[RMDB]
RNA sequence: GGGAACGACUCGAGUAGAGUCGAAAACUGCGAAACGUGUGGAAGCGCUGCAUGCGGUGCCGGAUCGCGAUAUCGUUGAUUUCUGCAAUUAAUUCCUACCCGUACGGGUGUGUCGCUGGUAGUCGGGUCCGGUACCGCUAUUCGUAGCGGUACCGGAAAAAGAAACAACAACAACAAC
Reactivity to DMS in 0.01 (KOAc 150mM, MgCl2 10mM, bicine 150mM(pH8.5), 24C), signal-to-noise 2, nucleotides 027 to 126: c040u000g000c050g020a090a080a150c100g000u010g040u000g010g010a190a180g000c020g000c040u000g030c060a100u000g010c010g000g010u010g040c020c010g000g000a020u000c020g000c020g020a140u000a050u010c070g050u000u000g010a110u000u000u000c120u010g020c120a050a080u000u020a070a170u010u000c050c010u000a040c010c000c000g010u020a050c220g000g010g010u000g020u020g020u000c070g010c060u000g000g000u020a020g060u000c020g000g010g000
Structure probing data (DMS) for a 177-nucleotide construct. Conditions: 150 mM KOAc, 10 mM MgCl2 and 150 mM bicine (pH 8.5), 24 C.